Chemical mapping of a 177-nucleotide RNA with DMS. Conditions: 150 mM KOAc, 10 mM MgCl2 and 150 mM bicine (pH 8.5), 24 C. Reactivities are given for positions 27 through 126.
RNA sequence: GGGAACGACUCGAGUAGAGUCGAAAAAGAAAAGCGGAGGAGGGUUAUGGAUUGCGCUAAGUCCGCCCGCGCGUGGUGUGGGCUGGAAUUCGUGAAUCGAGGAUAAUUAAUGCCGCGCGCCCAAAAACUAUAAAACUCACUUCGGUGAGUUUUAUAGAAAAGAAACAACAACAACAAC
Reactivity to DMS in 0.01 (KOAc 150mM, MgCl2 10mM, bicine 150mM(pH8.5), 24C), signal-to-noise 1, nucleotides 027 to 126: a120g020a110a100a090a180g000c050g010g000a050g000g010a130g000g010g000u000u010a030u010g020g010a030u000u000g010c040g030c110u020a040a110g000u000c000c000g010c020c000c010g030c040g010c120g030u000g010g010u010g030u000g000g000g020c010u010g010g020a030a040u000u000c090g000u000g000a040a020u000c030g030a170g000g010a060u000a040a030u030u000a060a130u010g020c030c000g000c020g000c090g000c000c030c010a020a110a060a060a100
Source: RMDB library M2PK90, as collected in RNAgym.